[RMDB]
RNA sequence: GGGAACGACUCGAGUAGAGUCGAAAACACGUCCCCACGUGAGGAUGCGCCUCUGCCGUCUACCCCGCAAUAUGCGACUAUGGUGGAAGCGUGAAUCACGUGGAUAGCCGCUCACAUGGUAGAGCCUGGUUAAGUAUGAGUUCGCUCAUACUUAACCAAAAGAAACAACAACAACAAC
Reactivity to DMS in 0.01 (KOAc 150mM, MgCl2 10mM, bicine 150mM(pH8.5), 24C), signal-to-noise 3, nucleotides 027 to 126: c160a150c280g000u000c050c050c000c010a030c010g020u000g000a030g010g020a210u000g010c010g010c010c040u010c010u000g030c010c020g040u000c160u010a080c230c070c110c000g020c050a110a050u010a070u000g000c020g000a110c180u000a010u000g010g050u000g020g000a010a050g010c000g020u010g000a300a210u020c010a000c000g060u010g000g010a110u000a050g010c080c130g000c020u000c030a060c050a170u000g000g010u010a080g030a040g000c030c240u000
Reactivity to 2A3 in 0.01 (KOAc 150mM, MgCl2 10mM, bicine 150mM(pH8.5), 24C), signal-to-noise 4, nucleotides 027 to 126: c100a010c060g130u090c040c020c000c000a020c000g020u020g000a000g020g040a040u110g010c010g000c000c000u010c010u010g000c010c010g030u040c050u090a150c020c030c010c000g010c000a060a250u210a160u300g010c000g020a030c030u040a040u120g000g000u010g000g010a000a000g000c030g000u060g000a000a010u000c000a000c000g010u000g000g000a010u080a020g090c080c060g030c010u040c010a070c020a170u220g110g000u100a100g020a010g030c010c080u050